[RMDB]
RNA sequence: GGGAACGACUCGAGUAGAGUCGAAAACCGUAUCGGUUCGCCGAUACGGAAAAGUUAAUGCUGCUAACACACAUCAUAAGCAUGGCGGUGGUAUCGCUGGUGGGACUCCCCAGUUCGCUGGGGAGAAUUAACCAAUCAAUUUCGAUUGAUUGGUUAAAAAAGAAACAACAACAACAAC
Reactivity to 2A3 in 0.01 (KOAc 150mM, MgCl2 10mM, bicine 150mM(pH8.5), 24C), signal-to-noise 5, nucleotides 027 to 126: c000c000g000u010a000u000c010g020g030u050u040c160g030c060c000g000a000u000a000c000g000g030a040a070a000a010g050u060u110a060a040u100g040c030u010g030c030u090a130a010c030a010c010a010c010a150u080c010a050u070a220a010g020c030a030u040g030g000c030g010g040u060g030g070u090a040u100c030g010c040u020g010g020u040g020g000g040a040c000u000c000c000c000c000a000g000u020u060c170g020c070u000g010g000g000g000a000g000a000a000
Reactivity to DMS in 0.01 (KOAc 150mM, MgCl2 10mM, bicine 150mM(pH8.5), 24C), signal-to-noise 8, nucleotides 027 to 126: c000c000g010u010a000u000c000g010g010u000u010c210g020c000c000g010a000u000a000c000g000g000a010a020a050a090g010u000u000a050a070u000g010c030u000g000c060u010a070a080c100a070c090a080c070a050u000c080a070u000a100a080g020c050a040u000g010g010c040g020g010u000g010g010u000a050u000c060g010c030u000g010g010u000g000g010g000a240c000u000c000c000c000c000a000g010u000u010c160g020c010u000g000g010g000g000a000g010a010a030